[RMDB]
RNA sequence: GGGAACGACUCGAGUAGAGUCGAAAAUCUUGUACCUGUCAACACUGCGCUGGUUCCAAAUGAGAAUAGAAAUGAUUUUUGUCAUCUUCUUCAUUGCUGUUACCUUCAUUUCCAUUUUAACAACAGGCCCUCCUUUGAAAUUCGUUUCAAAGGAGGGAAAAGAAACAACAACAACAAC
Reactivity to 2A3 in 0.01 (KOAc 150mM, MgCl2 10mM, bicine 150mM(pH8.5), 24C), signal-to-noise 3, nucleotides 027 to 126: u010c000u020u080g050u050a050c010c020u040g040u050c020a040a030c010a020c080u040g000c050g010c060u010g030g000u040u000c020c000a030a060a140u130g040a040g040a110a070u140a080g040a040a120a030u040g050a030u070u110u130u210u280g030u010c000a020u000c030u040u020c000u060u070c010a040u030u100g060c010u030g030u080u030a070c020c000u050u050c020a030u010u030u060c060c000a030u050u130u050u260a050a060c100a010a020c010a030g050g030
Reactivity to DMS in 0.01 (KOAc 150mM, MgCl2 10mM, bicine 150mM(pH8.5), 24C), signal-to-noise 3, nucleotides 027 to 126: u000c050u000u010g020u010a120c040c010u010g020u000c040a060a060c080a080c070u000g030c080g020c040u010g010g000u010u000c060c070a100a050a090u020g000a080g000a120a090u000a080g010a060a050a080u000g010a020u010u000u000u000u000g010u000c040a030u000c100u000u000c020u000u000c050a080u010u000g000c060u000g010u010u000a100c060c010u000u000c050a090u020u000u020c020c010a100u010u010u000u010a060a060c090a050a060c300a120g000g000